[RMDB]
RNA sequence: GGGAACGACUCGAGUAGAGUCGAAAAGGCGCUCCCUUCGGGGAGCGCCAAACCUGACAAGGGAGUCAGGAAAUCCCUUAAGUGUGCAGUCCACACGACAGAAAAGGGCGAUGUUCGCAUCGCCCAACAACAUUUACAGGUUCGCCUGUAAAUGUUGAAAAGAAACAACAACAACAAC
Reactivity to DMS in 0.01 (KOAc 150mM, MgCl2 10mM, bicine 150mM(pH8.5), 24C), signal-to-noise 1, nucleotides 027 to 126: g030g020c010g020c020u010c000c040c030u000u000c210g030g030g060g070a040g230c010g100c000c020a020a030a070c010c000u000g010a010c000a190a120g000g040g050a180g010u050c000a020g000g000a030a100a040u000c010c000c020u000u030a070a160g000u010g000u000g000c140a230g010u010c090c020a000c010a010c000g010a080c230a050g000a040a060a040a110g020g000g000c010g000a020u040g000u000u030c120g000c010a060u010c010g010c000c000c000a030a010